[RMDB]
RNA sequence: GGGAACGACUCGAGUAGAGUCGAAAAUGUAAACGGCACCAGGGGAGCCUCGGGGUCCUCACUGCCUUGAGGCCGAGCACAUUUUACACACAGGAAUGCACAAAAUAAAUGAAAUGUGUAGUCACAAAAUCUCGGUUUCCAUGUGAUUCACAUACAAUGACGUGGAAAAUUUCGAUUUUCCACGUCAAAAAGAAACAACAACAACAAC
Reactivity to 2A3 in 0.01 (KOAc 150mM, MgCl2 10mM, bicine 150mM(pH8.5), 24C), signal-to-noise 2, nucleotides 027 to 156: u040g000u020a170a090a040c040g000g000c030a020c040c020a070g060g000g000g000a020g040c070c070u060c020g050g000g000g050u010c000c060u050c020a070c050u030g000c010c000u000u010g040a040g030g030c000c000g010a010g000c000a010c000a030u010u030u050u160a090c060a030c000a000c000a030g170g130a070a080u100g090c090a010c100a020a030a030a080u300a110a110a120u220g060a200a090a010u070g010u010g030u020a010g010u010c000a040c010a080a100a050a070u090c110u050c080g000g110u000u070u000c050c050a060u020g000u020g010a020u090u070c050a010c070a080u280a020c020a000a030